RNA sequence: GGGAACGACUCGAGUAGAGUCGAAAACGUUGUCAUCGACAACACCCUAUGCAUUCAUGCUCUGUAAGGAUGCGCCGAAAGGUGAGCAAGCCCGAGUUGCCCAGACCUGAAAGGCAACACUUUAGAGAAAACCCGAAGCAGUUCGCUGCUUCGGGAACUAUUUUUCGUAGUUCGCUACGAAAAAUAGAAAAGAAACAACAACAACAAC
Reactivity to DMS in 0.01 (KOAc 150mM, MgCl2 10mM, bicine 150mM(pH8.5), 24C), signal-to-noise 2, nucleotides 027 to 156: c090g000u000u000g000u000c010a170u000c090g020a050c010a030a100c000a100c000c000c020u000a090u000g020c020a030u000u000c020a270u010g000c040u010c050u000g020u000a300a200g000g030a070u010g000c020g080c030c010g020a110a110a170g030g020u000g020a100g000c020a130a180g000c010c040c020g000a110g000u000u000g000c010c000c030a200g010a120c050c050u000g000a100a120a080g020g000c040a030a050c050a120c060u010u000u000a110g000a210g000a110a080a090a150c010c000c000g020a050a010g030c000a030g010u000u010c300g020c050u000g010c000u010u000c010g010g000g010a010a000
Reactivity to 2A3 in 0.01 (KOAc 150mM, MgCl2 10mM, bicine 150mM(pH8.5), 24C), signal-to-noise 4, nucleotides 027 to 156: c080g010u000u000g020u000c090a230u130c300g030a000c000a000a000c000a070c000c000c010u010a020u040g000c000a000u010u000c020a040u160g010c000u010c000u010g010u000a000a000g000g000a000u000g000c000g000c000c000g070a080a030a010g000g010u010g020a000g000c020a020a020g040c030c050c040g160a080g020u010u000g010c000c010c030a060g090a180c040c050u130g060a150a060a000g020g000c000a000a000c000a030c000u110u130u230a150g000a010g010a080a090a040a050c000c000c000g000a000a010g010c000a010g020u060u140c170g040c100u000g010c000u000u000c010g000g000g000a000a000
This 207-nucleotide RNA was probed chemically with DMS and 2A3. The RNA was probed in 150 mM KOAc, 10 mM MgCl2 and 150 mM bicine (pH 8.5) at 24 C. For 2A3, 3,208 sequencing reads were counted. 2A3 adducts were read by reverse transcription with SuperScript II with manganese. For DMS, 3,376 sequencing reads were counted. It was measured as part of the RMDB library M2RFPK.